Conditions: 150 mM KOAc, 10 mM MgCl2 and 150 mM bicine (pH 8.5), 24 C.
An RNA of 177 nucleotides, treated with DMS and 2A3 and read out base by base.
[RMDB]
RNA sequence: GGGAACGACUCGAGUAGAGUCGAAAAUUGUCCUUUAUUAACGCUGGCUUACAGAUUGACUGGGUCCAAUUAGUUCGUCUUUUGAUCUGGGGGUGAAUUUGACUUUUGUUAGGGCGCAAAACAAGGGCGAUAAGUUUAGAUUCGUCUAAAUUUAUCGAAAAGAAACAACAACAACAAC
Reactivity to DMS in 0.01 (KOAc 150mM, MgCl2 10mM, bicine 150mM(pH8.5), 24C), signal-to-noise 9, nucleotides 027 to 126: u030u030g010u010c010c010u000u030u030a070u040u020a090a120c110g010c030u000g000g010c040u010u010a070c080a050g010a090u020u010g010a070c040u000g000g000g010u010c050c060a070a090u020u020a080g010u010u010c060g010u010c020u000u000u010u010g000a050u010c030u010g000g010g000g000g010u010g010a060a070u020u010u010g010a090c040u000u020u010u020g010u010u000a070g010g000g010c020g020c070a050a040a050a050c130a060a060g010g000g010
Reactivity to 2A3 in 0.01 (KOAc 150mM, MgCl2 10mM, bicine 150mM(pH8.5), 24C), signal-to-noise 9, nucleotides 027 to 126: u080u080g050u060c020c000u060u110u080a150u060u120a070a030c060g010c040u030g050g000c010u030u060a040c020a040g050a140u100u080g050a080c030u050g020g010g010u010c030c020a050a070u070u030a080g050u020u040c030g060u050c030u030u090u040u100g040a060u020c030u040g030g000g010g000g010u040g040a030a050u060u030u090g060a060c020u020u050u050u050g040u040u030a020g020g020g000c020g000c020a010a040a020a010c050a030a030g040g030g000
2A3 adducts were read by reverse transcription with SuperScript II with manganese.
Values are in units of 0.01, from 0 to 300, in steps of 10.
The data come from the RNA Mapping Database (RMDB), library OK1LIB.